[RMDB]
RNA sequence: GGGAACGACUCGAGUAGAGUCGAAAAACGAUGUCGUUCGCGACAUCGUAAAUUGUAUAACCUUGCUUGAAGUCUACUUCGUUGUAAAGCGAGACAAGUCAGUGAGAGUCCUAUUCGUAGGACUCAAUAAUGGUCACCCAUUCGUGGGUGACCAUUAAAAAGAAACAACAACAACAAC
Reactivity to DMS in 0.01 (KOAc 150mM, MgCl2 10mM, bicine 150mM(pH8.5), 24C), signal-to-noise 1, nucleotides 027 to 126: a020c000g010a020u010g000u000c000g000u000u000c200g020c010g000a020c000a000u000c000g020u000a000a050a070u020u010g000u000a060u000a140a120c130c010u010u030g000c000u010u010g000a040a100g040u000c040u000a070c030u000u000c040g070u000u000g010u010a070a050a060g000c060g000a020g020a060c070a100a110g010u020c060a030g000u000g000a210g000a020g010u000c000c000u000a020u010u000c160g010u000a010g000g000a000c000u000c000a000a020

Structure probing data (DMS) for a 177-nucleotide construct. It was measured as part of the RMDB library M2PK50. For DMS the reverse transcriptase was MarathonRT.